Source: RMDB library OK3TST, as collected in RNAgym.
Structure probing data (2A3) for a 207-nucleotide construct.
Conditions: 150 mM KOAc, 10 mM MgCl2 and 150 mM bicine (pH 8.5), 24 C.
For 2A3 the reverse transcriptase was SuperScript II with manganese.
For 2A3, 386 sequencing reads were counted.

[RMDB]
RNA sequence: GGGAACGACUCGAGUAGAGUCGAAAAAUUUAAUUCUAAUGUAUGUAGACAUGCGUCAUUAUCAUCUACAUCUAAGAAUGUGAUUGGUUUAUAAACAUAUGUCACGUGCUCAGAUUGGGUAUUUAAGGACUGGUUGUCGUCAUCAGAAUCAGUGUCCCACUUCCGAUGUGUUCGCACAUCGGAAGUGAAAAGAAACAACAACAACAAC
Reactivity to 2A3 in 0.01 (KOAc 150mM, MgCl2 10mM, bicine 150mM(pH8.5), 24C), signal-to-noise 1, nucleotides 027 to 156: a000u240u300u200a000a020u030u050c010u010a110a040u050g060u100a000u080g010u020a060g000a030c020a090u100g000c070g050u020c030a070u100u210a070u040c020a010u040c020u090a080c040a040u000c000u030a080a100g060a100a020u030g000u030g010a000u000u100g140g160u090u130u110a180u170a020a080a000c030a000u110a120u150g030u120c010a000c030g000u010g060c030u030c060a100g020a240u050u170g030g030g000u230a110u040u110u130a000a160g030g020a000c040u100g130g000u050u000g000u010c100g090u050c040a030u080c000a000g010a000a070u050c030a020g050u030g120u200c030c000